RNA sequence: GGGAACGACUCGAGUAGAGUCGAAAAGGGGUCUCGUGUCAAAAUUACAGCAAGGCGUAUCUUUGGAGCUGAAGCCUCCACGGCUCGAUACGCUGAUGACCUGUAAUGAACCGGCACGAGACGGAGGCACCCAAACAUGAUCCUUCGGGAUCAUGAACGACAAAUUUAGGUUCGCCUAAAUUUGUCGAAAAGAAACAACAACAACAAC
Reactivity to DMS in 0.01 (KOAc 150mM, MgCl2 10mM, bicine 150mM(pH8.5), 24C), signal-to-noise 2, nucleotides 027 to 156: g000g000g010g010u000c000u010c010g010u000g030u000c000a010a090a230a050u000u000a040c000a030g030c000a060a040g000g000c010g030u000a010u000c000u000u010u030g070g010a040g070c000u010g000a100a090g030c020c000u010c000c020a300c000g040g000c000u010c000g000a070u000a000c010g030c000u000g010a050u010g020a060c300c010u000g000u010a020a030u000g000a150a140c160c080g000g020c010a030c000g020a010g010a010c000g020g000a060g010g030c010a150c000c020c000a080a060a210c010a020u010g010a020u000c000c000u000u000c300g070g010g000a000u000c000a000u000g000a080a160
Reactivity to 2A3 in 0.01 (KOAc 150mM, MgCl2 10mM, bicine 150mM(pH8.5), 24C), signal-to-noise 4, nucleotides 027 to 156: g140g000g030g000u010c020u000c000g000u020g000u000c080a300a300a090a150u010u000a000c010a010g030c010a040a050g000g010c010g000u000a000u010c060u150u300u300g080g000a000g000c000u000g000a050a010g000c000c000u000c000c000a050c010g000g000c000u000c010g000a000u000a000c000g000c000u010g000a030u010g000a000c000c000u000g000u000a000a010u020g060a080a070c120c070g010g000c010a000c000g020a000g000a010c000g000g000a000g000g000c000a020c000c010c000a010a110a000c010a000u000g000a000u000c010c010u050u070c300g080g000g000a000u000c000a000u000g010a040a030